[RMDB]
RNA sequence: GGGAACGACUCGAGUAGAGUCGAAAAGAACUUUGGCCGGCUCGGAAUAGAAUCAGGGGGUGCAAACUGCCCACUGGCAGAAAGGAUUCUAGCAAAUGCGUACCCUAUUGCAAUACAGCCCGGCCAACAUAGACUACUCUAUUCGUAGAGUAGUCAACUUUACCGUAACGUUCGCGUUACGGUAAAGAAAAGAAACAACAACAACAAC
Reactivity to 2A3 in 0.01 (KOAc 150mM, MgCl2 10mM, bicine 150mM(pH8.5), 24C), signal-to-noise 3, nucleotides 027 to 156: g030a040a020c040u030u020u050g000g010c000c020g020g000c030u070c100g040g070a150a120u130a090g060a060a040u150c090a060g000g000g000g060g000u010g010c020a060a110a110c020u020g020c030c030c040a160c220u170g000g000c000a010g050a030a040a020g120g030a140u130u040c040u110a030g040c050a030a060a130u090g010c020g020u080a070c030c000c000u060a120u030u060g030c060a070a010u040a170c020a040g040c050c010c010g060g000c010c000a000a000c000a010u030a020g000a000c000u000a000c000u000c010u000a030u070u030c180g070u030a000g000a000g010u000a000g000u000c000a000a000